[RMDB]
RNA sequence: GGGAACGACUCGAGUAGAGUCGAAAAGGGGUCCAGUGUAAGCUGUGUUGUCAGUUUCGGGUACUGAAGCCUCCACGGUAUCUCUAGCGUGAACUUGGAUUUACACAGUUGAGCUGGACGGAGGCACCCAAAACGUAAAAUUGUUCGCAAUUUUACGCUUUGUAAAGGACUUCGGUCCUUUACAAAGAAAAGAAACAACAACAACAAC
Reactivity to 2A3 in 0.01 (KOAc 150mM, MgCl2 10mM, bicine 150mM(pH8.5), 24C), signal-to-noise 3, nucleotides 027 to 156: g070g000g050g000u000c000c010a020g010u020g080u160a060a080g020c010u000g000u000g020u070u070g040u040c100a110g030u000u050u090c050g010g000g010u010a030c030u060g040a130a030g010c000c010u040c050c010a030c030g000g040u030a100u040c060u010c080u150a090g100c080g120u230g070a010a010c010u080u180g060g010a020u170u170u190a000c010a000c000a000g010u040u070g090a050g010c000u010g000g010a000c000g000g000a010g000g030c030a030c020c000c000a020a100a000a000c000g000u000a000a000a000a000u010u030g030u060u040c190g000c170a010a010u000u000u000u000a000c010g040
Reactivity to DMS in 0.01 (KOAc 150mM, MgCl2 10mM, bicine 150mM(pH8.5), 24C), signal-to-noise 2, nucleotides 027 to 156: g010g040g090g060u000c000c010a050g020u000g020u000a170a130g010c000u030g010u000g010u000u010g000u010c020a090g020u000u000u000c050g010g020g000u000a080c080u020g020a040a220g010c020c010u000c020c030a250c030g030g040u010a000u000c010u000c050u000a140g010c100g010u030g020a050a070c030u000u000g020g020a160u000u010u000a000c030a000c020a030g000u000u000g010a300g010c020u010g010g000a000c050g040g000a010g040g020c050a090c030c020c000a080a040a090a290c000g000u000a000a020a030a000u000u020g000u000u010c300g030c040a020a020u000u000u000u000a020c010g010
This 207-nucleotide RNA was probed chemically with 2A3 and DMS. For 2A3 the reverse transcriptase was SuperScript II with manganese. The data come from the RNA Mapping Database (RMDB), library RNAMAK. For 2A3, 2,053 sequencing reads were counted. DMS adducts were read by reverse transcription with MarathonRT. High 2A3 reactivity points to a flexible backbone, as in loops and unpaired stretches.